[RMDB]
RNA sequence: GGGAACGACUCGAGUAGAGUCGAAAAGAAGUGUUUGAUACGACAGUGACUUACCUUUUCGAUAUGUGUCAUAAAGUACGCCCGGAUAAUCCGGAAAAUGUCAUUCGUUCGGAAACGUCAAGACAAACUGCUAAGUGAAAUUCGUUUCACUUAGCAGAAAAGAAACAACAACAACAAC
Reactivity to 2A3 in 0.01 (KOAc 150mM, MgCl2 10mM, bicine 150mM(pH8.5), 24C), signal-to-noise 9, nucleotides 027 to 126: g150a080a040g050u060g060u150u120u110g120a120u170a080c030g020a010c050a070g040u030g090a030c010u050u140a120c020c010u050u060u040u070c080g030a030u020a040u230g140u040g030u040c040a050u090a100a120a020g040u030a030c050g050c010c010c000g000g000a150u170a220a080u100c020c010g020g000a020a060a020a020u090g000u000c010a020u040u080c080g080u060u030c030g030g000a040a080a060c060g050u070c080a040a020g060a100c040a020a090a020
Reactivity to DMS in 0.01 (KOAc 150mM, MgCl2 10mM, bicine 150mM(pH8.5), 24C), signal-to-noise 6, nucleotides 027 to 126: g000a120a100g020u000g020u000u000u000g010a080u030a030c040g000a100c210a080g010u020g000a080c030u010u010a080c050c040u000u010u010u000c020g000a030u020a070u010g000u000g000u010c010a060u000a060a080a100g010u000a040c170g020c130c000c000g010g000a250u040a090a120u010c020c010g000g020a030a010a080a030u010g000u000c000a040u000u010c110g020u010u000c050g000g000a030a040a030c150g000u010c100a030a020g020a060c090a040a060a160